The data come from the RNA Mapping Database (RMDB), library TTRINS.
An RNA of 177 nucleotides, treated with DMS and read out base by base.
RNA sequence: GGGAACGACUCGAGUAGAGUCGAAAAGAUAUGGAAAUACACUUACGUAAGUCAAGGGAGCUCGAACUCGGAAACGAGUUCUUUGGAGCAUCGAUCUUGACUUACGUAAGUGUGAUUUCCUAAGUCACACUGAGAUAACGUUCGCGUUAUCUCAGUGAAAAGAAACAACAACAACAAC
Reactivity to DMS in 0.01 (KOAc 150mM, MgCl2 10mM, bicine 150mM(pH8.5), 24C), signal-to-noise 3, nucleotides 027 to 126: g000a070u010a300u010g000g010a010a030a000u000a020c000a010c000u000u000a000c000g020u000a010a010g000u000c000a020a010g010g000g010a020g020c020u000c010g000a000a010c000u000c000g010g000a130a130a240c000g010a020g010u010u000c000u000u010u030g040g020a020g020c010a300u000c170g010a040u010c000u000u000g010a030c000u000u000a000c000g000u000a000a000g020u010g010u000g000a000u000u000u000c000c000u000a030a120g010u010c020a270

For DMS, 3,581 sequencing reads were counted. Values cover nucleotides 27 to 126. In probing experiments dimethyl sulfate is read out at A N1 and C N3, which are open when not base-paired.